An RNA of 207 nucleotides, treated with 2A3 and read out base by base.
RNA sequence: GGGAACGACUCGAGUAGAGUCGAAAAUCGAGAUCGAUCUCUCCUUCCUGAUCCUUCGACUGAGAUCCUAGGACUUCUCGAAGGAGAAGGACUCUUCUCUCGAGAUCAGGAUCCUGAUCUCCUGAAGCUAGCUGAGACUCUUCAGGAAGAGGAUCUCGAUUCGGAGACUUUUCGAAGUCUCCGAAUCAAAAGAAACAACAACAACAAC
Reactivity to 2A3 in 0.01 (KOAc 150mM, MgCl2 10mM, bicine 150mM(pH8.5), 24C), signal-to-noise 1, nucleotides 027 to 156: u010c010g010a040g060a070u140c110g020a070u010c020u010c010u010c020c010u020u020c010c000u010g030a030u030c020c000u030u100c010g040a060c060u150g040a020g060a240u010c020c050u040a080g050g000a060c010u090u010c020u050c010g010a030a030g050g030a010g000a000a000g020g000a000c000u000c010u070u030c050u020c000u020c010g020a010g000a040u050c040a020g010g000a030u000c000c010u050g060a170u050c000u020c000c000u000g000a000a000g000c130u130a020g040c080u180g110a080g060a300c000u010c010u050u000c000a000g010g030a000a000g010a030g020g010a000u000c010u070c040
Reactivities are rounded to 0.1 and cut off at 0 and 3.